[RMDB]
RNA sequence: GGGAACGACUCGAGUAGAGUCGAAAAGUGGUGCGCGGAGAGGGUAACCACCGGCGCGCGUCACUGAUAUAUCCACCGGGGGGUAAGGGGAGAAAAGGAUACAGCGCGACGGAGUUAGCACGCUGCCGAAAUGUACCCACAUUCGUGUGGGUACAAAACUUAAUAAGCCAUUCGUGGCUUAUUAAGUAAAAGAAACAACAACAACAAC
Reactivity to DMS in 0.01 (KOAc 150mM, MgCl2 10mM, bicine 150mM(pH8.5), 24C), signal-to-noise 1, nucleotides 027 to 156: g060u000g000g010u000g000c010g040c000g020g030a300g000a130g000g010g020u000a110a160c230c130a080c030c000g010g010c000g000c000g020c000g010u000c010a100c010u000g010a090u010a110u000a080u030c000c030a110c060c000g000g010g000g000g040g020u000a030a060g000g030g020g050a150g000a060a110a100a060g000g030a150u000a060c040a070g020c010g040c010g040a110c040g000g010a100g020u000u010a160g000c130a030c050g040c010u010g030c000c020g000a070a080a130u020g000u000a000c010c010c000a010c010a170u000u000c300g070u000g030u010g030g000g000u000a000c040a000a020a060
Reactivity to 2A3 in 0.01 (KOAc 150mM, MgCl2 10mM, bicine 150mM(pH8.5), 24C), signal-to-noise 1, nucleotides 027 to 156: g010u000g050g010u040g020c010g010c010g000g070a090g060a050g130g080g000u130a130a140c050c040a080c080c030g040g090c000g010c000g000c000g020u010c000a000c000u000g000a000u030a010u030a040u140c070c020a090c050c010g030g000g000g000g000g000u060a040a030g000g010g000g000a030g060a010a100a000a000g040g000a030u100a210c000a010g010c000g000c000g070a050c030g020g040a030g060u030u080a010g010c040a010c080g020c030u050g000c030c000g060a070a060a100u070g000u030a000c000c030c000a000c000a010u070u110c210g030u020g000u010g010g000g000u000a000c010a000a000a000

Background:
The data come from the RNA Mapping Database (RMDB), library M2RFPK. This 207-nucleotide RNA was probed chemically with DMS and 2A3. 2A3 adducts were read by reverse transcription with SuperScript II with manganese.